[RMDB]
RNA sequence: GGGAACGACUCGAGUAGAGUCGAAAAUAGCAGGAAAUAGCCGUUAUGCGCGAAGCGGUGUAGCGUCACUUUGAUGGCGGUACUAUGAAUUGAUGCAAGGUGUGGAGCGACCUUAAACAGUUCUGGUUUGACGGCUUUCAGUUCGCUGAAAGCCGAAACACACCAAUGGGUUCGCCCAUUGGUGUGUAAAAGAAACAACAACAACAAC
Reactivity to 2A3 in 0.01 (KOAc 150mM, MgCl2 10mM, bicine 150mM(pH8.5), 24C), signal-to-noise 3, nucleotides 027 to 156: u120a010g000c020a000g020g080a030a000a090u070a020g000c010c000g030u070u080a080u160g060c040g010c040g020a020a000g000c020g020g000u040g020u060a030g110c000g000u000c020a020c090u170u170u200g170a200u100g080g000c010g040g020u050a020c040u050a040u160g040a040a030u100u080g030a020u110g070c040a040a010g000g000u010g010u080g010g010a000g000c010g000a010c000c000u080u170a090a010a000c000a010g000u000u010c020u020g080g050u070u060u170g050a020c000g000g020c000u000u000u000c000a020g010u000u090c140g010c080u000g000a000a000a010g000c000c000g000a000a000
Conditions: 150 mM KOAc, 10 mM MgCl2 and 150 mM bicine (pH 8.5), 24 C. Chemical mapping of a 207-nucleotide RNA with 2A3.